[RMDB]
RNA sequence: GGGAACGACUCGAGUAGAGUCGAAAAGAAACUGUGCUGCUGUCUGGGUGCUCGGCCUUAGGAGCUGUGCUGCCGUCUGGGUGCUUGGACCCCAGGAGCUGUGCUGCCAUCUGGGUGCUCAGCCCUAAUGUAACAAUUUUUUCGAAAAUUGUUACAUAAAAGAAACAACAACAACAAC
Reactivity to DMS in 0.01 (KOAc 150mM, MgCl2 10mM, bicine 150mM(pH8.5), 24C), signal-to-noise 6, nucleotides 027 to 126: g010a110a080a100c060u020g010u010g000c020u000g000c030u000g010u010c030u010g000g000g010u010g010c040u000c050g010g010c080c050u000u000a150g010g010a140g010c020u000g000u010g020c020u000g000c020c070g020u010c030u000g000g010g010u030g010c040u020u020g010g010a100c040c010c010c020a020g000g010a130g010c000u000g020u010g000c030u010g020c000c030a160u030c090u020g010g000g020u000g000c020u000c020a060g000c010c010c010u010a070
Reactivity to 2A3 in 0.01 (KOAc 150mM, MgCl2 10mM, bicine 150mM(pH8.5), 24C), signal-to-noise 9, nucleotides 027 to 126: g060a010a080a010c060u060g030u090g060c020u020g000c010u030g040u110c010u020g030g000g030u050g020c020u020c030g040g010c010c030u090u120a100g050g060a080g020c030u040g050u070g030c030u050g040c010c020g070u050c010u020g010g000g020u120g050c050u090u160g120g060a200c010c000c000c010a010g010g010a030g010c020u030g030u060g030c030u060g020c010c010a070u070c070u110g060g000g010u040g010c010u010c040a020g010c000c010c000u060a100

This 177-nucleotide RNA was probed chemically with DMS and 2A3. The 2A3 profile rests on 26,373 reads. DMS (dimethyl sulfate) methylates the pairing face of unpaired adenines and cytosines. DMS adducts were read by reverse transcription with MarathonRT.